Structure probing data (DMS and 2A3) for a 177-nucleotide construct. The DMS profile rests on 7,867 reads. For 2A3, 3,925 sequencing reads were counted. It was measured as part of the RMDB library OK2TRN. In probing experiments dimethyl sulfate is read out at A N1 and C N3, which are open when not base-paired. Reactivities are rounded to 0.1 and cut off at 0 and 3.
RNA sequence: GGGAACGACUCGAGUAGAGUCGAAAAAAACGUGUGCGCCGAUUGACUAAGGGUUCCUGGGUCAAGCUGAUCUGCCCAGGGUAAGUCGGGACCUAAGGCGAGGCCGACAGGCGUAGUCGAUGGAUAAGUGUAUACGAAGUUUCGACUUCGUAUACACAAAAGAAACAACAACAACAAC
Reactivity to DMS in 0.01 (KOAc 150mM, MgCl2 10mM, bicine 150mM(pH8.5), 24C), signal-to-noise 6, nucleotides 027 to 126: a030a030a050c100g010u000g010u000g010c050g000c020c000g020a100u000u000g000a070c060u000a110a100g020g010g000u000u000c000c000u000g010g000g010u000c100a070a080g010c110u010g000a060u000c070u000g010c010c000c000a050g000g000g010u000a030a060g010u000c020g000g010g000a090c010c010u010a100a110g020g010c060g000a130g000g010c020c010g010a080c300a090g020g020c030g010u000a220g000u000c020g000a100u010g000g000a110u010a040a160
Reactivity to 2A3 in 0.01 (KOAc 150mM, MgCl2 10mM, bicine 150mM(pH8.5), 24C), signal-to-noise 3, nucleotides 027 to 126: a000a020a020c050g020u080g020u050g040c090g010c030c000g070a100u040u140g020a040c050u050a050a120g140g070g000u100u090c010c020u000g000g010g020u180c120a060a020g040c130u170g080a130u100c020u030g000c000c000c000a000g020g000g000u030a060a010g020u020c010g000g010g080a070c000c010u040a070a010g070g020c040g030a030g010g020c000c000g040a050c040a080g020g000c010g000u020a010g060u030c010g000a030u050g040g010a030u070a120a030